[RMDB]
RNA sequence: GGGAACGACUCGAGUAGAGUCGAAAAUGAUCGAGAGAUCUAACGAUGUACGCGAGUCAACGGCACAGACUCGAGCGAAAGCUCGGUCGAAAGACCGCGUACAUCGGUCGGCAAGUGUCCAGUCAAACCAUAUACGAUCCUUCGGGAUCGUAUAUGGAAAAGAAACAACAACAACAAC
Reactivity to 2A3 in 0.01 (KOAc 150mM, MgCl2 10mM, bicine 150mM(pH8.5), 24C), signal-to-noise 4, nucleotides 027 to 126: u090g010a010u010c010g010a000g010a000g000a090u010c010u020a050a020c010g000a000u010g010u010a000c000g000c010g020a060g030u010c030a070a070c080g100g000c050a040c020a080g020a020c030u040c150g000a000g010c000g050a120a010a000g000c000u000c000g010g000u000c010g000a020a010a000g000a000c000c000g000c000g000u000a000c000a000u000c000g000g000u060c030g020g020c040a160a230g050u030g030u080c000c020a010g030u050c050a060a020a050
Reactivity to DMS in 0.01 (KOAc 150mM, MgCl2 10mM, bicine 150mM(pH8.5), 24C), signal-to-noise 7, nucleotides 027 to 126: u010g010a020u000c000g010a260g000a250g000a010u000c010u000a090a090c000g000a010u000g000u000a000c010g020c000g000a060g010u000c010a050a110c120g000g010c060a030c110a250g000a020c010u000c010g010a010g000c000g010a130a100a150g000c000u000c000g010g000u000c000g010a070a080a150g000a020c000c000g010c000g010u000a000c000a000u000c010g010g000u000c120g000g010c040a040a100g000u000g000u000c020c030a170g000u000c040a100a130a210